RNA sequence: GGGAACGACUCGAGUAGAGUCGAAAAGGAGGUACCGUAGAGUGUCAUGGUUGGGCUUUGGCAUUGAGCCUAUUAAUUCUUGUAUCUGAGAGAGGCACUGCUCUGAUUCGGAGAGUGCUAGAGAGAGUGAUGGGAAAGGCAUGGUAGUAAGGUUAGAACUGCCACUAUCGUUCGCGAUAGUGGCAGUAAAAGAAACAACAACAACAAC
Reactivity to 2A3 in 0.01 (KOAc 150mM, MgCl2 10mM, bicine 150mM(pH8.5), 24C), signal-to-noise 1, nucleotides 027 to 156: g080g050a000g000g040u100a010c000c010g100u080a080g020a000g060u130g090u140c090a030u040g070g000u000u060g040g030g000c050u130u070u070g060g000c010a090u060u090g000a060g000c020c000u100a100u140u130a120a060u040u000c020u010u010g070u060a060u040c080u080g030a030g000a030g000a040g130g000c010a010c030u080g140c000u000c000u000g270a300u270u210c060g000g000a010g000a000g020u000g000c000u010a040g000a000g000a000g000a010g080u020g100a040u060g010g000g000a000a000a200g020g010c030a010u080g000g000u010a000g000u000a060a000g020g000u000u040a000g000a050

An RNA of 207 nucleotides, treated with 2A3 and read out base by base. Reactivities are given for positions 27 through 156. 2A3 is a SHAPE reagent: it acylates the 2'-hydroxyl of flexible nucleotides of all four kinds. For 2A3, 466 sequencing reads were counted. For 2A3 the reverse transcriptase was SuperScript II with manganese.